[RMDB]
RNA sequence: GGGAACGACUCGAGUAGAGUCGAAAAGAAGGAAGGCGGAGAAAAGGAGCGGGCCCUCCGAUCCGAGGGGCCCGACGCCCCUGAUCUGGAGAGCACUCCGGCCCGAAGGGUUGAGUAGCACCCAGAGUAAGCCUCACCUUCGGGUGAGGCAAAAGAAACAACAACAACAAC
Reactivity to DMS in 0.01 (KOAc 150mM, MgCl2 10mM, bicine 150mM(pH8.5), 24C), signal-to-noise 5, nucleotides 027 to 129: g020a100a030g020g060a070a020g010g060c010g000g020a120g010a060a030a080a120g010g010a000g020c130g000g000g000c090c020c020u010c020c040g020a000u030c120c300g000a060g000g000g000g010c030c050c100g040a060c150g020c020c010c000c010u040g010a080u030c000u040g000g000a000g020a080g000c050a090c050u000c030c110g030g010c000c010c010g050a080a070g000g040g070u050u070g010a060g020u030a110g030c060a090c050c020c040a100g050a110g040u090a140a120
Reactivity to 2A3 in 0.01 (KOAc 150mM, MgCl2 10mM, bicine 150mM(pH8.5), 24C), signal-to-noise 2, nucleotides 027 to 129: g080a040a000g000g000a000a000g010g010c040g000g040a020g010a050a050a000a020g010g000a070g040c000g000g000g000c020c000c000u010c000c020g050a050u040c020c020g030a040g030g000g010g000c020c100c010g060a040c150g010c020c000c000c000u000g020a050u000c020u000g020g000a020g000a000g000c020a000c000u010c040c000g070g010c000c010c000g000a120a010g040g000g000u040u090g000a000g040u040a010g000c030a040c000c000c000a020g010a000g010u110a090a000

Record summary:
Conditions: 150 mM KOAc, 10 mM MgCl2 and 150 mM bicine (pH 8.5), 24 C. An RNA of 170 nucleotides, treated with DMS and 2A3 and read out base by base. High 2A3 reactivity points to a flexible backbone, as in loops and unpaired stretches. For DMS, 12,722 sequencing reads were counted. For 2A3, 4,818 sequencing reads were counted. It was measured as part of the RMDB library 15KLIB.